[RMDB]
An RNA of 177 nucleotides, treated with 2A3 and DMS and read out base by base. The reactions ran in a buffer of 150 mM KOAc, 10 mM MgCl2 and 150 mM bicine (pH 8.5), at 24 C. DMS (dimethyl sulfate) methylates the pairing face of unpaired adenines and cytosines. DMS adducts were read by reverse transcription with MarathonRT. The 2A3 profile rests on 2,175 reads.

RNA sequence: GGGAACGACUCGAGUAGAGUCGAAAAGGCGAGGCGAAGCGCAUCGCGCGGUUCGAGCUGGCGCGCUAUGCCGCGCAGGCGCUGAUGAUGCCUUACCGCCAGUUUCGCGAUGCUGCCGUGCGGGCGACUAAUCCGGUCGAUUCGUCGACCGGAUUAGAAAAGAAACAACAACAACAAC
Reactivity to 2A3 in 0.01 (KOAc 150mM, MgCl2 10mM, bicine 150mM(pH8.5), 24C), signal-to-noise 2, nucleotides 027 to 126: g050g000c000g000a000g000g000c010g050a050a000g030c010g020c000a080u170c150g020c020g010c000g000g010u060u140c140g040a030g000c030u120g100g040c070g030c010g030c060u060a060u190g000c020c020g000c000g010c000a010g030g020c000g000c020u050g020a140u120g010a060u200g020c010c010u010u010a060c040c020g030c010c000a030g000u030u040u050c050g010c020g040a090u130g020c030u080g060c000c030g000u050g070c040g000g040g000c010g000a000
Reactivity to DMS in 0.01 (KOAc 150mM, MgCl2 10mM, bicine 150mM(pH8.5), 24C), signal-to-noise 3, nucleotides 027 to 126: g020g010c010g010a030g000g020c010g010a100a050g010c030g010c010a090u010c180g010c000g020c010g010g010u010u000c220g000a070g010c020u000g020g020c120g020c080g000c100u000a090u000g000c030c010g000c010g020c020a080g010g010c000g010c010u010g000a120u010g010a130u000g010c010c000u000u020a060c100c020g000c040c030a090g020u000u000u000c030g020c040g010a110u000g000c060u010g000c030c060g010u000g010c030g010g000g000c040g010a200

Overview
Values cover nucleotides 27 to 126.